[RMDB]
RNA sequence: GGGAACGACUCGAGUAGAGUCGAAAAGAUAUGGAGCCAUGGGCUUCGACGACGCCACGUCGGAAACGACGUGGCAUCAGAAGCCAUAAGGCUCCUAAGUCAAAACUAAGUUCUUCGGAACUUAGAACACAAGGAUUACGUUCGCGUAAUCCUUGUGAAAAGAAACAACAACAACAAC
Reactivity to 2A3 in 0.01 (KOAc 150mM, MgCl2 10mM, bicine 150mM(pH8.5), 24C), signal-to-noise 2, nucleotides 027 to 126: g000a000u040a010u130g000g000a010g010c060c020a110u160g130g120g060c050u010u010c010g120a230c030g000a000c010g010c020c000a010c010g000u030c020g000g000a020a020a000c020g000a000c020g000u020g000g000c000a000u000c000a000g000a010a000g000c000c000a000u090a050a090g020g000c010u000c000c000u000a000a010g010u000c000a030a000a060a070c020u020a030a000g010u030u000c010u040u130c300g130g000a010a000c010u010u000a010g100a180a010
Reactivity to DMS in 0.01 (KOAc 150mM, MgCl2 10mM, bicine 150mM(pH8.5), 24C), signal-to-noise 3, nucleotides 027 to 126: g010a030u000a060u010g000g000a010g050c000c030a160u010g010g030g020c010u010u010c000g000a020c300g000a000c020g000c010c000a000c000g010u010c010g010g000a010a010a030c000g000a020c000g000u010g000g010c000a000u010c000a020g030a000a010g020c010c000a080u020a140a160g000g020c000u000c000c000u000a000a060g000u000c000a130a100a160a300c010u000a010a010g000u010u000c000u000u000c210g030g000a010a020c000u000u000a010g010a130a220